[RMDB]
RNA sequence: GGGAACGACUCGAGUAGAGUCGAAAAGAUAUGGAUGUACUAACGUGCCUUGGAUUUAGUUUCGGAAACGAAACUUGUCAGGACCCACGGUGUACAUCCUAAGUCAAAACUGUACUUCGGUACAGAACAUUUCUAAUUUCUUCGGAAAUUAGAAAUGAAAAGAAACAACAACAACAAC
Reactivity to 2A3 in 0.01 (KOAc 150mM, MgCl2 10mM, bicine 150mM(pH8.5), 24C), signal-to-noise 7, nucleotides 027 to 126: g030a030u080a040u160g010g000a010u010g010u010a000c030u110a300a230c020g000u020g020c020c000u050u090g140g000a090u300u300u240a010g000u000u000u010c010g000g020a060a050a050c010g000a000a000a000c000u000u000g010u000c010a010g060g000a060c110c100c000a010c000g010g020u050g000u010a000c000a000u000c000c000u010a060a000g030u000c020a010a010a140a180c010u010g000u000a010c010u030u080c300g120g000u000a000c000a010g020a030a000
Reactivity to DMS in 0.01 (KOAc 150mM, MgCl2 10mM, bicine 150mM(pH8.5), 24C), signal-to-noise 8, nucleotides 027 to 126: g010a040u000a300u010g000g000a010u000g010u000a000c000u000a070a090c000g020u000g000c290c010u000u000g020g010a010u000u010u010a010g020u000u000u000c000g000g000a110a080a210c010g010a010a000a010c000u000u000g010u000c000a020g010g000a090c130c300c030a010c010g000g000u000g010u000a010c000a000u000c010c010u000a020a080g010u010c040a100a070a080a140c010u000g010u000a000c000u000u010c180g030g000u000a000c010a010g010a080a160

Chemical mapping of a 177-nucleotide RNA with 2A3 and DMS. It was measured as part of the RMDB library TTRDEL. The reactions ran in a buffer of 150 mM KOAc, 10 mM MgCl2 and 150 mM bicine (pH 8.5), at 24 C. For 2A3 the reverse transcriptase was SuperScript II with manganese.